[RMDB]
Chemical mapping of a 207-nucleotide RNA with DMS and 2A3. For DMS the reverse transcriptase was MarathonRT. The DMS profile rests on 2,976 reads. 2A3 adducts were read by reverse transcription with SuperScript II with manganese. Source: RMDB library RNAMAK, as collected in RNAgym. Conditions: 150 mM KOAc, 10 mM MgCl2 and 150 mM bicine (pH 8.5), 24 C. Reactivities are given for positions 27 through 156.

RNA sequence: GGGAACGACUCGAGUAGAGUCGAAAAGGGGUCAGUUGAGCUCCAUGUUUGGGCGAUAAGCUAUACUGAAGCCUCCACGGUAUAGCUUUUGACGCCUAAUAUGGAGCAAUGAUGCUGACGGAGGCACCCAAAAGACUUUAAGUUCGCUUAAAGUCAACGAAUCAAAAUACUUCGGUAUUUUGAUUCGAAAAGAAACAACAACAACAAC
Reactivity to DMS in 0.01 (KOAc 150mM, MgCl2 10mM, bicine 150mM(pH8.5), 24C), signal-to-noise 1, nucleotides 027 to 156: g000g000g020g010u000c010a010g040u010u000g000a030g000c000u000c000c010a030u000g000u000u000u000g060g010g020c020g010a180u000a030a020g030c000u000a010u000a030c000u000g010a050a190g020c030c010u000c040c000a300c050g010g050u000a000u000a020g010c000u000u000u000u000g000a190c080g010c010c000u000a020a040u000a010u000g010g000a040g000c010a040a040u010g010a080u000g000c020u010g000a050c010g010g020a030g100g050c020a150c020c010c020a120a110a080a180g000a030c000u000u000u000a000a040g040u000u010c300g020c020u000u000a010a000a030g000u000c000a020a170
Reactivity to 2A3 in 0.01 (KOAc 150mM, MgCl2 10mM, bicine 150mM(pH8.5), 24C), signal-to-noise 2, nucleotides 027 to 156: g030g010g100g040u000c010a010g000u010u030g050a000g000c000u010c000c010a000u040g060u020u040u120g020g010g000c060g030a100u070a150a000g000c000u000a000u000a020c020u030g110a130a040g000c000c000u000c010c010a000c000g000g000u020a010u010a010g010c010u030u020u050u120g170a060c020g000c000c000u010a000a000u000a000u070g000g000a000g050c000a020a010u000g000a000u000g000c000u000g010a000c000g000g000a000g010g000c000a040c000c010c000a010a120a010a030g000a000c010u000u000u020a020a000g010u030u130c300g040c100u010u000a000a000a000g000u000c000a010a020